[RMDB]
RNA sequence: GGGAACGACUCGAGUAGAGUCGAAAAGAUAUGGAGAGAACUACGAUAAGUCCGUGUCGGAAACGACACGUGGACUUUUGACGUAGACUCCUAAGUCAAAAGAUAGGAUACUUCGGUAUCCUAUCAACAUUCAAUUAAACUUCGGUUUAAUUGAAUGAAAAGAAACAACAACAACAAC
Reactivity to 2A3 in 0.01 (KOAc 150mM, MgCl2 10mM, bicine 150mM(pH8.5), 24C), signal-to-noise 5, nucleotides 027 to 126: g010a000u070a030u140g020g000a030g010a040g060a200a110c000u020a000c010g080a090u050a240a010g000u000c010c000g010u000g000u000c000g020g010a090a040a020c010g000a000c000a020c010g030u130g020g040a000c000u040u010u030u070g060a020c010g000u000a000g050a070c000u000c000c000u020a080a030g030u020c050a050a070a030a100g010a010u010a010g010g000a010u020a000c000u040u120c300g050g000u010a000u000c000c000u000a000u000c000a000a000
Reactivity to DMS in 0.01 (KOAc 150mM, MgCl2 10mM, bicine 150mM(pH8.5), 24C), signal-to-noise 6, nucleotides 027 to 126: g000a030u000a300u010g000g000a020g010a130g010a140a120c010u000a010c000g010a170u010a010a010g020u000c000c000g000u000g000u000c010g000g000a100a060a150c000g010a010c000a000c000g010u010g010g000a010c010u000u000u000u000g020a200c060g010u000a000g010a150c000u000c010c000u000a060a150g000u010c030a090a080a110a130g010a010u000a000g000g000a010u000a010c000u000u010c200g020g000u000a010u000c000c000u000a000u000c000a060a160
The record gives the reactivity of an RNA of 177 nucleotides to 2A3 and DMS. Conditions: 150 mM KOAc, 10 mM MgCl2 and 150 mM bicine (pH 8.5), 24 C.